This 177-nucleotide RNA was probed chemically with DMS and 2A3. Source: RMDB library M2PK50, as collected in RNAgym. The reactions ran in a buffer of 150 mM KOAc, 10 mM MgCl2 and 150 mM bicine (pH 8.5), at 24 C. Values cover nucleotides 27 to 126. 2A3 adducts were read by reverse transcription with SuperScript II with manganese.

RNA sequence: GGGAACGACUCGAGUAGAGUCGAAAACCCGUUUUGUUCGCAAAACGGGACUCAUCUUUGCUUGGCAGCAUAGCAGGUGUUGGCUGGACAGCUGGCUUAUCCUUGGAGGCAGUUUCGACUGCCUCAAAUAAGAAACUUUAUUCGUAAAGUUUCUUAUAAAAGAAACAACAACAACAAC
Reactivity to DMS in 0.01 (KOAc 150mM, MgCl2 10mM, bicine 150mM(pH8.5), 24C), signal-to-noise 4, nucleotides 027 to 126: c010c000c000g010u000u000u000u000g010u010u010c200g020c010a010a010a010a010c000g010g010g010a130c060u000c060a080u010c060u000u010u000g010c050u000u000g010g020c090a080g010c050a060u000a050g010c080a060g010g010u000g010u000u000g020g020c040u000g000g000a080c130a070g000c030u000g000g000c040u000u000a070u000c030c030u000u000g020g000a020g000g010c000a010g000u000u000u010c170g010a040c000u000g000c000c000u000c010a010a030
Reactivity to 2A3 in 0.01 (KOAc 150mM, MgCl2 10mM, bicine 150mM(pH8.5), 24C), signal-to-noise 2, nucleotides 027 to 126: c010c010c010g000u000u000u000u000g010u020u090c180g000c080a020a010a010a000c010g000g000g010a060c010u000c020a110u060c050u080u140u080g040c020u030u070g050g060c040a010g040c010a080u040a060g020c030a010g080g000u020g020u240u100g060g000c020u020g010g020a000c030a070g010c040u010g020g000c010u060u070a080u100c010c030u030u110g110g000a010g000g000c010a000g010u000u030u110c140g060a030c030u000g070c000c000u010c000a010a030